[RMDB]
RNA sequence: GGGAACGACUCGAGUAGAGUCGAAAAGCAAAUCCGUCGAAAGACGGAGACGCGCAGCCCUUGACGCGUCGGCGUUGCGCUGAUGCGUCUGGUACUCUAGAUACUGCAUAUCUGCUCGCUCGCACUCCCGUCCUCCCGACUUCGGUCGGGAGGACGGAAAAGAAACAACAACAACAAC
Reactivity to 2A3 in 0.01 (KOAc 150mM, MgCl2 10mM, bicine 150mM(pH8.5), 24C), signal-to-noise 1, nucleotides 027 to 126: g050c020a020a050a160u000c000c000g030u000c000g030a050a020a020g000a000c010g020g010a000g000a000c030g030c000g010c030a080g000c000c050c000u000u050g000a000c020g010c000g030u000c000g020g020c020g120u300u300g060c140g000c010u000g020a030u040g000c010g000u000c000u020g010g030u030a000c000u000c030u140a020g000a130u010a090c000u060g080c050a000u020a090u070c000u030g000c000u030c000g020c000u000c000g030c020a090c020u050c000